Chemical mapping of a 177-nucleotide RNA with DMS.
It was measured as part of the RMDB library M2PK50.
For DMS the reverse transcriptase was MarathonRT.
For DMS, 757 sequencing reads were counted.

RNA sequence: GGGAACGACUCGAGUAGAGUCGAAAAGGCGCUCCCUUCGGGGAGCGCCAAACCUGACAAGGGAGUCUGGAAAUCCCUUAAGUGUGCAGUCCACACGACUGAAAAGGGCGAUGUUCGCAUCGCCCAAGAUACGGAUAAAGUUCGCUUUAUCCGUAUCAAAAGAAACAACAACAACAAC
Reactivity to DMS in 0.01 (KOAc 150mM, MgCl2 10mM, bicine 150mM(pH8.5), 24C), signal-to-noise 1, nucleotides 027 to 126: g010g090c070g110c000u000c010c000c000u020u010c110g090g030g160g000a060g090c080g150c030c000a030a030a030c000c000u030g030a060c230a080a030g000g020g000a030g010u000c090u060g020g000a120a120a090u000c000c000c000u000u000a130a100g020u000g010u010g010c030a100g000u000c040c020a010c060a040c110g000a050c060u000g000a020a060a160a050g000g020g000c000g010a000u000g000u000u020c190g020c000a000u000c000g000c000c020c000a000a020